[RMDB]
RNA sequence: GGGAACGACUCGAGUAGAGUCGAAAAUGGACGCAUUCGAGGGAUACGAUGUAUCUCCUCCUUACGUGCUCUCAGUACCAGUAGAGUCCGAUCCCGCUACGAUAUCUAGCGGCGUCGCUGUCAGUAACAGUGGGACAACGUUCGCGUUGUCCCACUGAAAAGAAACAACAACAACAAC
Reactivity to 2A3 in 0.01 (KOAc 150mM, MgCl2 10mM, bicine 150mM(pH8.5), 24C), signal-to-noise 2, nucleotides 027 to 126: u160g020g030a060c050g000c020a040u050u100c120g010a000g020g000g010a010u030a030c160g190a190u300g050u020a000u040c110u080c000c000u020c000c000u090u090a010c020g000u020g010c000u000c020u010c030a010g100u060a090c020c030a000g070u050a050g070a030g040u010c030c020g010a020u000c060c000c000g000c000u020a030c110g090a110u090a100u300c030u020a030g030c010g000g010c030g070u020c010g040c050u030g070u050c040a050g060u050a100a040
Reactivity to DMS in 0.01 (KOAc 150mM, MgCl2 10mM, bicine 150mM(pH8.5), 24C), signal-to-noise 2, nucleotides 027 to 126: u010g010g020a030c030g000c000a040u000u020c260g000a040g000g030g010a020u000a000c000g020a230u010g000u000a010u000c000u010c010c000u000c000c080u000u010a030c050g050u000g000c020u010c040u010c020a070g010u000a190c070c070a170g020u000a080g000a050g000u020c070c020g000a040u010c300c000c000g000c010u010a020c100g020a210u000a120u010c150u010a000g000c000g010g000c220g060u000c030g000c110u010g020u000c080a120g010u000a100a120

Chemical mapping of a 177-nucleotide RNA with 2A3 and DMS. Reactivities are given for positions 27 through 126. Conditions: 150 mM KOAc, 10 mM MgCl2 and 150 mM bicine (pH 8.5), 24 C. The DMS profile rests on 1,511 reads. For 2A3 the reverse transcriptase was SuperScript II with manganese.